[RMDB]
RNA sequence: GGGAACGACUCGAGUAGAGUCGAAAAGUAUAAAAUCUGCAAGUAGUGGUAUUGUUGGAAUCACCGUACCUAUUUAGGUUUACGCUCCAAGAUCGGUGGAUAGCAGCCCUAUCAAUAUCUAGGAGAAAAAACCCAGGACUGUUCGCAGUCCUGGGAACCACGUAUACGUGUUCGCACGUAUACGUGGAAAAGAAACAACAACAACAAC
Reactivity to 2A3 in 0.01 (KOAc 150mM, MgCl2 10mM, bicine 150mM(pH8.5), 24C), signal-to-noise 2, nucleotides 027 to 156: g050u020a030u050a280a180a060a040u080c020u050g150c080a080a040g050u050a020g050u070g070g010u070a040u150u070g060u030u040g020g080a040a070u110c010a020c010c000g040u040a010c010c020u070a180u140u270u290a060g000g010u020u060u060a020c020g010c010u000c000c010a020a000g000a010u010c020g010g080u030g160g040a000u000a020g020c030a020g030c040c010c000u010a050u010c020a070a020u020a040u130c000u010a050g000g000a020g000a100a040a020a030a000a050c010c000c000a000g000g010a000c000u010g040u040u070c140g020c110a000g000u000c000c000u010g000g000g000a000a000